The data come from the RNA Mapping Database (RMDB), library OK1LIB. The record gives the reactivity of an RNA of 177 nucleotides to 2A3 and DMS. For DMS, 2,341 sequencing reads were counted. DMS adducts were read by reverse transcription with MarathonRT. The 2A3 profile rests on 1,873 reads.
RNA sequence: GGGAACGACUCGAGUAGAGUCGAAAAGAACCGAGAACGGUAAGACGCGCUAUGUCAAAAGCCGCAAUAGAUCAUACGCCGCAAGUGGCAAGACGGCGAGCGCGCAAAGCGGUAUGGAAGAGAAGAAGGAUUAGCUACUGUUCGCAGUAGCUAAUCCAAAAGAAACAACAACAACAAC
Reactivity to 2A3 in 0.01 (KOAc 150mM, MgCl2 10mM, bicine 150mM(pH8.5), 24C), signal-to-noise 3, nucleotides 027 to 126: g010a030a010c000c020g020a000g090a150a090c060g060g000u130a020a000g100a120c000g020c000g020c000u080a130u280g090u040c000a000a000a050a110g000c010c010g010c020a000a080u070a110g070a070u120c070a090u090a150c020g010c010c010g000c020a050a160g050u040g040g000c030a080a010g070a010c030g000g030c010g000a020g000c030g000c000g000c000a000a000a040g020c010g020g000u000a050u050g080g090a030a090g040a040g040a210a000g030a100a040
Reactivity to DMS in 0.01 (KOAc 150mM, MgCl2 10mM, bicine 150mM(pH8.5), 24C), signal-to-noise 2, nucleotides 027 to 126: g000a120a130c060c020g050a110g070a130a080c150g010g010u000a080a060g030a090c030g020c040g000c010u020a100u100g020u000c060a150a020a090a040g000c010c000g000c000a150a110u040a070g000a130u030c040a090u000a150c080g000c040c040g000c130a130a130g000u010g000g000c030a040a180g000a190c120g010g000c000g000a020g000c000g050c000g050c070a080a080a150g000c000g040g000u050a050u000g000g000a050a070g000a030g020a160a050g000a180a170